Chemical mapping of a 177-nucleotide RNA with 2A3 and DMS. DMS adducts were read by reverse transcription with MarathonRT. For 2A3 the reverse transcriptase was SuperScript II with manganese. The reactions ran in a buffer of 150 mM KOAc, 10 mM MgCl2 and 150 mM bicine (pH 8.5), at 24 C. It was measured as part of the RMDB library OK1LIB.
[RMDB]
RNA sequence: GGGAACGACUCGAGUAGAGUCGAAAAGCGACUGGGCAAGGUCGUGGUGCUACAAUUAUGGCCAUUUUACAAGGUGCGAUUAUCAUUCCAGUAUUAUUUAUUAUGAAUGCUUUGUUUGGACUAACAGCACUGUUGCUACGUUCGCGUAGCAACAGUGAAAAGAAACAACAACAACAAC
Reactivity to 2A3 in 0.01 (KOAc 150mM, MgCl2 10mM, bicine 150mM(pH8.5), 24C), signal-to-noise 4, nucleotides 027 to 126: g010c010g020a030c040u060g050g060g030c080a130a070g020g000u020c020g010u050g050g090u030g040c010u030a070c070a170a170u220u080a060u210g090g020c040c020a070u110u160u070u120a100c070a050a080g000g000u090g070c040g010a010u040u050a060u180c050a010u090u050c000c000a000g040u050a030u060u050a060u110u250u110a140u100u080a030u150g110a090a040u060g000c060u000u050u050g060u020u000u150g070g040a060c010u040a070a050c050a080g000
Reactivity to DMS in 0.01 (KOAc 150mM, MgCl2 10mM, bicine 150mM(pH8.5), 24C), signal-to-noise 3, nucleotides 027 to 126: g000c030g000a020c050u010g000g000g010c110a100a170g000g000u000c050g000u040g000g030u010g040c050u000a110c170a070a100u040u000a060u050g000g000c050c020a120u020u000u000u090a090c110a120a080g020g000u000g000c050g030a120u010u000a090u010c060a080u000u010c020c070a030g000u000a040u010u000a040u020u030u000a090u050u000a070u010g010a080a050u000g010c020u010u010u010g000u020u010u020g000g000a060c110u020a010a100c210a070g010